[RMDB]
RNA sequence: GGGAACGACUCGAGUAGAGUCGAAAAAGAUAGCCGCUCAGCUGCAUGGUUUGGCUAUCUAGGUUUGACACAAGUAAAGUAAAUCCAUACACUAAACAUGCAUUACAUGCUUUUCCAAAUCUGCAUUUAUUUCACUCCACACACAAAGCCCUAUUCAAAUAGAUAGGCCUUUCGAGGCCUAUCUAUUAAAAGAAACAACAACAACAAC
Reactivity to 2A3 in 0.01 (KOAc 150mM, MgCl2 10mM, bicine 150mM(pH8.5), 24C), signal-to-noise 2, nucleotides 027 to 156: a000g020a000u010a000g000c020c030g050c060u090c090a120g030c050u130g030c070a100u070g020g060u110u110u100g010g000c000u000a000u000c000u030a000g090g000u020u060u100g060a020c020a010c050a130a020g090u100a150a080a000g030u030a080a040a080u030c060c000a020u030a020c100a030c080u120a020a140a000c020a040u060g000c010a020u040u060a020c010a030u040g020c040u060u020u050u030c040c010a020a030a110u030c050u040g020c040a060u040u140u070a090u020u170u100c000a040c030u060c010c000a030c010a000c030a040c040a060a090a010g040c030c050c000u060a110u100u110c050a010
Chemical mapping of a 207-nucleotide RNA with 2A3. The RNA was probed in 150 mM KOAc, 10 mM MgCl2 and 150 mM bicine (pH 8.5) at 24 C.